[RMDB]
RNA sequence: GGGAACGACUCGAGUAGAGUCGAAAAGAUUUAAACAGAUGGAGAUACACAAAUGUUUGAAUCCCAGUAACAAAAAUCCUGGUAUCUCGGGUAUACAGUAGUGCAUAUACUGUAUUUUUAAUGCUCCUUAGGUUUUCCAUCUUCGGAUGGAAAACAACCUAACGACAUUCUUCGGAAUGUCGUUAGGAAAAGAAACAACAACAACAAC
Reactivity to 2A3 in 0.01 (KOAc 150mM, MgCl2 10mM, bicine 150mM(pH8.5), 24C), signal-to-noise 1, nucleotides 027 to 156: g000a000u000u000u040a030a000a000c000a000g050a030u010g000g000a000g020a010u020a000c020a000c000a010a040a080u050g000u010u020u010g030a020a010u030c000c000c050a080g150u160a100a110c100a110a220a010a000a040u030c000c040u030g000g010u000a000u000c000u000c010g000g000g000u020a020u000a000c000a000g000u050a000g070u050g250c040a040u130a010u030a240c000u030g000u000a000u000u000u000u020u090a170a140u110g030c040u170c050c110u070u100a020g150g030u000u010u000u020c010c010a000u000c000u000u070c240g110g000a000u000g010g000a010a010a000a010c000a000a000
Background
An RNA of 207 nucleotides, treated with 2A3 and read out base by base. Conditions: 150 mM KOAc, 10 mM MgCl2 and 150 mM bicine (pH 8.5), 24 C. The data come from the RNA Mapping Database (RMDB), library M2RFOK.